[RMDB]
RNA sequence: GGGAACGACUCGAGUAGAGUCGAAAACGAAAUGACUCUAAGGUCAGCCUGACUGGAGGUUGGUGGCGGGGUAGAGCACUAAUUGGACGUUUAGGGAGGGAAACUUCUCGGCGUACUGUAAAACUCCAAGACACAUUCCUUUCGAGGAAUGUGUCUUAAAAGAAACAACAACAACAAC
Reactivity to DMS in 0.01 (KOAc 150mM, MgCl2 10mM, bicine 150mM(pH8.5), 24C), signal-to-noise 2, nucleotides 027 to 126: c240g010a030a120a090u020g000a110c030u010c090u000a100a170g000g000u000c000a050g010c050c010u060g020a070c080u020g000g000a050g010g000u000u010g000g010u030g030g000c160g010g010g000g000u000a020g010a050g000c060a080c100u000a140a120u020u020g020g000a020c130g010u010u020u050a170g010g000g000a050g030g000g000a090a060a120c030u000u000c000u030c040g000g000c060g020u000a110c030u010g010u010a050a010a140a070c090u000c070c090
Reactivity to 2A3 in 0.01 (KOAc 150mM, MgCl2 10mM, bicine 150mM(pH8.5), 24C), signal-to-noise 3, nucleotides 027 to 126: c040g000a030a000a030u170g000a020c000u000c000u080a160a010g060g000u030c010a020g030c020c000u090g040a200c010u020g080g030a050g030g030u100u110g040g030u000g000g050c190g000g010g010g030u070a070g010a010g000c010a010c080u090a210a000u230u100g050g000a000c030g040u050u110u070a100g030g000g040a070g030g000g000a010a010a040c000u050u010c020u050c060g000g000c000g010u040a170c000u020g100u170a030a040a040a070c020u100c110c040